About this RNA: The record gives the reactivity of an RNA of 207 nucleotides to 2A3. It was measured as part of the RMDB library OK3TST. For 2A3, 429 sequencing reads were counted.
RNA sequence: GGGAACGACUCGAGUAGAGUCGAAAAGACGUGGAGGUUACGCGCCCUCCUUUGCGCGUAAGUACGUCGAAAUUCGGUGCUUCGGAUCGCACCGUUGGAUCCAUUUGAUAUCCGCUUCGUGCCGCGGUUGGGCAUUUACACUUACCCGAAAGGGGAAGGUGCUGGAUUAGUUCGCUAAUCCAGCACCAAAAGAAACAACAACAACAAC
Reactivity to 2A3 in 0.01 (KOAc 150mM, MgCl2 10mM, bicine 150mM(pH8.5), 24C), signal-to-noise 1, nucleotides 027 to 156: g060a060c040g050u140g040g140a120g070g160u010u020a000c010g000c010g000c060c110c000u240c000c040u120u100u200g000c000g000c020g000u000a050a000g170u020a000c000g040u020c060g030a000a020a070u080u080c090g000g000u000g000c000u110u090c060g120g020a020u110c080g000c020a000c000c010g000u000u000g010g010a020u070c000c000a050u300u000u180g080a050u050a040u010c040c000g000c000u160u100c090g110u020g000c050c020g050c000g050g000u040u060g030g010g040c000a000u010u090u110a060c090a010c010u140u140a110c000c000c070g010a040a040a000g170g000g000g000a010a010